[RMDB]
RNA sequence: GGGAACGACUCGAGUAGAGUCGAAAACAACACCAACAUUUCCUGCAGAGCCUUGAACAAUGGCACAAUCCUACAUAAUCACAGUAGUGAUUAUGAGCGCCUCCUUCCCCUGGAACUCCACCUUCGGUCAUUUAACCCAGCUGCUGCAUCACCAGGAGUAGUAAUGCUACUUCGGUAGCAUUACUACAAAAGAAACAACAACAACAAC
Reactivity to 2A3 in 0.01 (KOAc 150mM, MgCl2 10mM, bicine 150mM(pH8.5), 24C), signal-to-noise 5, nucleotides 027 to 156: c060a020a020c050a040c060c020a040a080c010a150u070u090u060c010c000u050g000c030a020g030a010g080c010c020u060u060g030a050a050c040a130a100u100g030g000c050a020c030a070a060u060c000c010u060a110c010a000u010a010a020u020c010a000c020a100g300u300a030g000u150g000a000u010u010a000u010g030a040g020c090g020c000c020u040c010c010u020u070c000c010c000c000u000g030g010a040a040c020u020c010c000a020c010c000u040u050c020g020g000u010c020a050u090u110u090a060a050c010c020c000a020g030c020u050g000c000u010g000c020a030u060c020a030c060c020a010g090g020a050
Reactivity to DMS in 0.01 (KOAc 150mM, MgCl2 10mM, bicine 150mM(pH8.5), 24C), signal-to-noise 2, nucleotides 027 to 156: c040a080a080c070a260c020c020a090a100c070a110u000u020u010c000c020u000g000c060a160g000a140g030c020c030u000u000g010a080a080c080a110a090u010g020g020c060a100c020a050a090u000c010c010u000a300c020a030u010a010a020u000c000a030c000a300g040u000a130g030u000g010a010u000u000a010u000g010a060g030c050g000c010c010u000c000c040u000u000c020c010c010c020u000g020g010a040a060c030u000c020c050a030c010c010u000u000c050g000g030u000c030a110u010u000u000a060a200c030c000c020a140g040c030u000g020c020u010g000c040a090u000c060a060c020c030a100g030g020a300